Notes:
The record gives the reactivity of an RNA of 177 nucleotides to 2A3. Source: RMDB library TTRDEL, as collected in RNAgym. Values cover nucleotides 27 to 126.

RNA sequence: GGGAACGACUCGAGUAGAGUCGAAAAGAUAUGGACCAUAGAGGCUUUUGACGAAUACUCGGAAACGAGAUUCGAUAAGCCUCCGUGGUCCUAAGUCAAAACCAGAGACCGUUCGCGGUCUCUGGAACCAUAUGGCAGCGUUCGCGCUGCCAUAUGGAAAAGAAACAACAACAACAAC
Reactivity to 2A3 in 0.01 (KOAc 150mM, MgCl2 10mM, bicine 150mM(pH8.5), 24C), signal-to-noise 1, nucleotides 027 to 126: g000a010u030a020u060g010g000a020c020c000a000u020a030g020a020g000g000c050u180u200u240u300g180a100c020g020a000a010u250a300c000u000c010g000g020a010a010a000c030g010a010g000a020u000u000c000g020a010u010a160a050g000c030c000u020c000c010g000u000g030g000u010c000c020u000a000a010g010u000c010a000a000a030a210c000c000a000g000a000g000a000c050c010g040u170u190c300g040c020g220g000u040c010u020c000u000g010g010a010a000
As a SHAPE reagent, 2A3 marks flexible, mostly unpaired nucleotides at the ribose 2'-OH. For 2A3, 1,061 sequencing reads were counted. The reactions ran in a buffer of 150 mM KOAc, 10 mM MgCl2 and 150 mM bicine (pH 8.5), at 24 C.